[RMDB]
RNA sequence: GGGAACGACUCGAGUAGAGUCGAAAAGAAUAUAAAGCGCGAGGGACCAAUUGCGAGCGACCUCGCGCUACCAGCUGACGACUCACCAAGCGCGCAGCCAGCUGGAGGUUACGCUCGCAAGAGAAGAGCGUACUCAUCCAUUCGUGGAUGAGUACGCAAAAGAAACAACAACAACAAC
Reactivity to 2A3 in 0.01 (KOAc 150mM, MgCl2 10mM, bicine 150mM(pH8.5), 24C), signal-to-noise 2, nucleotides 027 to 126: g050a040a010u130a010u060a120a040a000g000c000g000c000g000a000g010g000g050a030c030c080a070a250u110u030g000c000g000a000g000c000g000a060c000c000u000c000g020c010g000c000u010a000c000c000a000g020c000u000g000a030c020g100a120c010u030c040a060c020c090a160a080g040c050g000c000g020c080a020g010c000c000a000g000c000u000g010g010a010g100g040u060u120a040c030g000c000u000c000g000c000a000a010g010a000g000a120a030g040a010